[RMDB]
RNA sequence: GGGAACGACUCGAGUAGAGUCGAAAAGUUCGCCAUCUCCUACGGUCUUUGAGAUAGUUACGUUGACAUCUUCAAGCGAAUGAAUACGAGAUUCCUUUGCUGCCAAGCGAAUUUCUUGAGAUGCGGCGAGUCCGUCGUAAUUCGUUACGACGGACUCAAAAGAAACAACAACAACAAC
Reactivity to 2A3 in 0.01 (KOAc 150mM, MgCl2 10mM, bicine 150mM(pH8.5), 24C), signal-to-noise 1, nucleotides 027 to 126: g000u030u030c040g040c090c020a040u020c000u020c040c010u040a060c020g080g000u070c020u000u050u110g020a000g000a030u080a120g010u050u060a150c300g150u150u190g060a060c010a030u040c000u040u040c020a020a020g020c050g110a120a050u130g050a060a000u220a110c100g010a020g000a050u000u020c010c000u000u050u120g030c030u070g030c010c000a000a000g000c010g030a030a020u000u020u020c000u000u110g050a080g000a020u090g030c050g050g000c030
Reactivity to DMS in 0.01 (KOAc 150mM, MgCl2 10mM, bicine 150mM(pH8.5), 24C), signal-to-noise 2, nucleotides 027 to 126: g010u000u000c030g000c060c090a070u000c030u010c020c020u000a090c110g010g040u020c030u020u000u020g010a050g010a050u000a100g020u010u000a080c190g030u000u000g040a050c020a060u000c040u000u020c260a070a030g020c060g010a070a070u000g010a090a100u000a050c250g020a090g000a050u000u000c020c050u000u000u010g010c040u000g010c060c070a040a030g010c110g030a040a040u000u000u000c010u000u000g010a050g010a060u020g000c110g000g010c090